[RMDB]
Structure probing data (DMS and 2A3) for a 177-nucleotide construct.
For 2A3 the reverse transcriptase was SuperScript II with manganese.
It was measured as part of the RMDB library OK2TRN.
RNA sequence: GGGAACGACUCGAGUAGAGUCGAAAAAUCGCGCAACCGGGCGGACAGGAUGCUCGGGUCGGUCAGCGAAUGGCAGUAGGCUUCGCAGGGUAGGGGAUCCGGCAACCGCCCGCUGGCUGCUUGCGAGCAUUACGUCGGAGUUCGCUCCGACGUAAUGAAAAGAAACAACAACAACAAC
Reactivity to DMS in 0.01 (KOAc 150mM, MgCl2 10mM, bicine 150mM(pH8.5), 24C), signal-to-noise 2, nucleotides 027 to 126: a100u000c020g040c020g010c020a020a020c000c010g000g020g020c000g000g010a040c030a160g040g000a120u000g020c000u020c020g020g000g020u000c010g010g020u000c040a150g020c020g000a050a050u010g010g020c000a230g010u010a100g010g010c020u000u000c040g010c040a100g020g020g020u010a120g020g000g000g010a050u000c000c010g030g000c020a030a040c020c000g000c010c010c010g040c020u000g000g000c010u000g010c010u000u030g020c000g000a060g000
Reactivity to 2A3 in 0.01 (KOAc 150mM, MgCl2 10mM, bicine 150mM(pH8.5), 24C), signal-to-noise 2, nucleotides 027 to 126: a000u010c010g000c000g010c010a010a130c000c020g120g050g040c010g000g020a040c020a160g080g030a060u030g020c110u140c120g020g000g020u010c040g040g110u060c020a030g000c000g060a080a110u110g110g000c030a090g150u280a060g290g000c010u040u010c010g000c040a040g110g080g040u140a130g130g060g040g020a010u000c000c000g000g000c000a010a010c000c000g020c000c000c000g000c010u000g000g000c010u010g000c020u060u170g000c000g000a030g020